[RMDB]
RNA sequence: GGGAACGACUCGAGUAGAGUCGAAAAGUAGAGAUUGGAAUUCUUGUGUAUUGCUAGAGGGAAUGUAAAAUAGUGCAGGGUGCUGUGGAAAAUGCUGUGGUGAUUCCUCAAAAAAUUAAACAUAAUUAUAUAAUCCAGUAAUUCCACUUCUGAGUUAAUCGUAAUAAGAGUUCGCUCUUAUUACGAUAAAAGAAACAACAACAACAAC
Reactivity to 2A3 in 0.01 (KOAc 150mM, MgCl2 10mM, bicine 150mM(pH8.5), 24C), signal-to-noise 1, nucleotides 027 to 156: g030u090a020g000a010g030a130u020u070g000g020a080a110u050u010c050u110u030g000u000g010u030a030u090u130g000c000u010a000g000a010g030g030g090a070a050u010g000u110a030a010a070a110u040a090g060u030g010c030a000g000g030g000u010g000c020u010g030u050g000g080a000a090a000a000u130g000c080u080g030u050g030g010u030g000a050u030u050c000c000u030c000a040a200a110a000a040a220u180u300a110a140a020c050a000u300a230a060u300u100a150u070a070u040a250a030u000c030c000a000g000u000a000a030u070u030c000c000a000c050u070u030c050u100g010a010g090u130u180a100
The record gives the reactivity of an RNA of 207 nucleotides to 2A3. For 2A3, 420 sequencing reads were counted. The RNA was probed in 150 mM KOAc, 10 mM MgCl2 and 150 mM bicine (pH 8.5) at 24 C. 2A3 adducts were read by reverse transcription with SuperScript II with manganese.